RNA sequence: GGGAACGACUCGAGUAGAGUCGAAAAUCGCCUGAAGCCGCAGAACUUUCAGUACAACCCCAUCGGCAGCGUGCACGGCGGUGUCUAUGCUAGGCUGCUCGACUCGGCGGUGGCCUGCGCCAUUCAGCCGUUAGGCCCAGUUCGCUGGGCCUAACGGAAAAGAAACAACAACAACAAC
Reactivity to DMS in 0.01 (KOAc 150mM, MgCl2 10mM, bicine 150mM(pH8.5), 24C), signal-to-noise 1, nucleotides 027 to 126: u000c000g010c150c000u000g000a070a050g000c270c030g010c000a050g030a080a090c130u000u000u000c090a090g020u040a130c210a110a170c000c020c000c030a150u000c030g010g000c010a030g000c000g000u000g020c040a000c100g000g000c060g020g000u000g020u000c020u000a130u000g020c000u000a050g000g000c000u000g010c040u000c050g020a080c180u020c090g000g000c050g030g010u030g060g000c050c030u020g000c070g020c040c080a170u000u000c070a100g010
Structure probing data (DMS) for a 177-nucleotide construct. The RNA was probed in 150 mM KOAc, 10 mM MgCl2 and 150 mM bicine (pH 8.5) at 24 C.